[RMDB]
An RNA of 177 nucleotides, treated with 2A3 and read out base by base. Values are in units of 0.01, from 0 to 300, in steps of 10. For 2A3, 378 sequencing reads were counted. The RNA was probed in 150 mM KOAc, 10 mM MgCl2 and 150 mM bicine (pH 8.5) at 24 C. It was measured as part of the RMDB library OK1LIB.
RNA sequence: GGGAACGACUCGAGUAGAGUCGAAAAACACGCCGCGGAUCGUCGCACCGGGUUAAGCCUGGAGUGCGGUGGUGCCUGGUCGGCAUUUUCGCAGUCGAGGGCUCUCGUGUAGCCUGGGCGAGUUGCCAACGCGGGUGUGCUUCGGCACACCCGCGUUAAAAGAAACAACAACAACAAC
Reactivity to 2A3 in 0.01 (KOAc 150mM, MgCl2 10mM, bicine 150mM(pH8.5), 24C), signal-to-noise 1, nucleotides 027 to 126: a000c020a000c060g000c000c000g020c000g000g000a000u050c000g050u000c000g000c000a130c000c000g000g000g120u100u160a230a090g150c000c000u170g010g000a060g170u000g060c020g050g000u000g070g000u150g030c000c000u240g040g000u250c010g000g000c000a000u010u000u010u010c170g000c040a000g100u030c160g050a300g000g000g080c010u000c070u030c020g120u070g070u270a000g010c070c000u020g000g090g000c090g000a020g000u000u010g000c000c030